[RMDB]
Structure probing data (DMS and 2A3) for a 177-nucleotide construct. DMS adducts were read by reverse transcription with MarathonRT. 2A3 adducts were read by reverse transcription with SuperScript II with manganese. Conditions: 150 mM KOAc, 10 mM MgCl2 and 150 mM bicine (pH 8.5), 24 C.
RNA sequence: GGGAACGACUCGAGUAGAGUCGAAAAGAUAUGGAUCCCAGUGGAAGGUGGUGGCGUUGAAAUCGGAAACGAUGGAGCCAUGUUACAGCCCACGGGAUCCUAAGUCAAACGUGUCUUCGGACACGAACAUGUGCAAUAGCUUCGGCUAUUGCACAUGAAAAGAAACAACAACAACAAC
Reactivity to DMS in 0.01 (KOAc 150mM, MgCl2 10mM, bicine 150mM(pH8.5), 24C), signal-to-noise 4, nucleotides 027 to 126: g010a050u010a300u000g010g000a010u010c000c010c010a150g110u010g010g020a140a140g000g010u000g010g030u000g010g020c000g000u000u010g000a080a110a020u000c000g010g010a100a080a150c000g000a020u000g010g000a130g010c000c010a010u000g010u000u010a060c080a150g020c250c000c000a020c020g000g010g010a010u010c000c000u010a010a070g020u000c040a070a090a250c040g010u000g020u000c010u000u000c170g020g000a010c010a020c000g010a030a130
Reactivity to 2A3 in 0.01 (KOAc 150mM, MgCl2 10mM, bicine 150mM(pH8.5), 24C), signal-to-noise 2, nucleotides 027 to 126: g060a020u080a030u130g000g000a000u000c020c020c100a000g000u020g010g080a200a210g120g060u130g050g050u010g010g030c010g110u290u070g040a110a100a010u030c000g000g020a040a020a020c010g000a020u010g020g000a020g010c000c000a000u020g020u020u070a060c050a040g110c000c020c000a010c000g010g020g000a020u000c010c000u010a050a010g020u010c030a090a020a090c030g000u000g000u010c030u080u030c300g130g000a000c000a000c020g000a020a010

It was measured as part of the RMDB library TTRDEL.